An RNA of 177 nucleotides, treated with DMS and read out base by base.
For DMS the reverse transcriptase was MarathonRT.
Conditions: 150 mM KOAc, 10 mM MgCl2 and 150 mM bicine (pH 8.5), 24 C.

RNA sequence: GGGAACGACUCGAGUAGAGUCGAAAAGAUCCUCGAUUCCCGCGGCAACCCGACGGUGGAGGUCGAGGUGGCGCUUAUCGACGGGACAUUCGCCCGGGCCGCGGUGCCGUCGGGCGCCUCGACCGGGCCGAAACCCUUGUUUCGACAAGGGUUUCGGAAAAGAAACAACAACAACAAC
Reactivity to DMS in 0.01 (KOAc 150mM, MgCl2 10mM, bicine 150mM(pH8.5), 24C), signal-to-noise 3, nucleotides 027 to 126: g010a140u000c010c000u000c040g000a170u000u000c020c010c010g020c040g010g030c050a090a090c010c000c000g000a060c030g010g010u000g010g020a150g000g020u000c000g000a080g000g010u000g000g020c040g010c100u000u020a080u010c030g000a110c070g010g000g010a090c250a150u010u000c120g000c010c010c030g010g000g010c150c050g020c120g010g010u000g000c010c000g010u010c300g000g010g020c010g010c010c000u000c000g010a090c000c010g000g010g020